[RMDB]
RNA sequence: GGGAACGACUCGAGUAGAGUCGAAAAGGCCGAUUCUAGACCGUGGCCAAGGUGGGAUGAAGCCUUCUCUCUCUCUGGCCAGAGUGCUCCUCAAGUGUGACCUUCCUUUGGUAGCUGGGCAGUUUUCUCCUUGCAGUAGGUGUGGCCUUAGAUGGCCCAUCAUAGACCGUUUCGACGGUCUAUGAUGAAAAGAAACAACAACAACAAC
Reactivity to 2A3 in 0.01 (KOAc 150mM, MgCl2 10mM, bicine 150mM(pH8.5), 24C), signal-to-noise 4, nucleotides 027 to 156: g020g000c020c020g060a070u040u020c020u080a060g080a210c040c030g090u100g050g000c040c010a000a040g030g010u060g020g050g000a040u070g050a100a060g050c010c010u070u050c010u000c000u020c000u000c000u010c050u030g040g050c030c020a020g040a020g050u090g020c040u020c030c030u080c060a070a050g050u030g050u070g140a070c020c010u060u080c020c040u110u040u070g060g020u080a030g040c020u020g000g010g010c010a020g000u040u010u070u030c030u010c000c040u040u060g050c050a070g020u090a020g030g040u070g030u040g040g000c010c020u040u040a130g020a170u110g010g000c000c000
Reactivity to DMS in 0.01 (KOAc 150mM, MgCl2 10mM, bicine 150mM(pH8.5), 24C), signal-to-noise 3, nucleotides 027 to 156: g020g000c000c020g000a250u000u000c070u000a140g010a090c020c020g010u000g030g030c060c060a030a070g000g020u010g010g000g010a070u010g000a120a130g020c050c040u000u000c020u000c010u010c030u000c020u000c040u000g020g000c020c020a180g010a070g020u000g020c030u000c020c000u000c040a060a100g020u000g010u010g000a060c020c040u000u000c050c030u010u020u010g030g010u010a080g020c030u000g000g010g040c010a090g010u000u000u000u000c020u000c030c030u000u010g020c060a100g030u000a060g010g000u000g020u010g030g020c010c010u010u000a150g010a100u010g040g040c020c030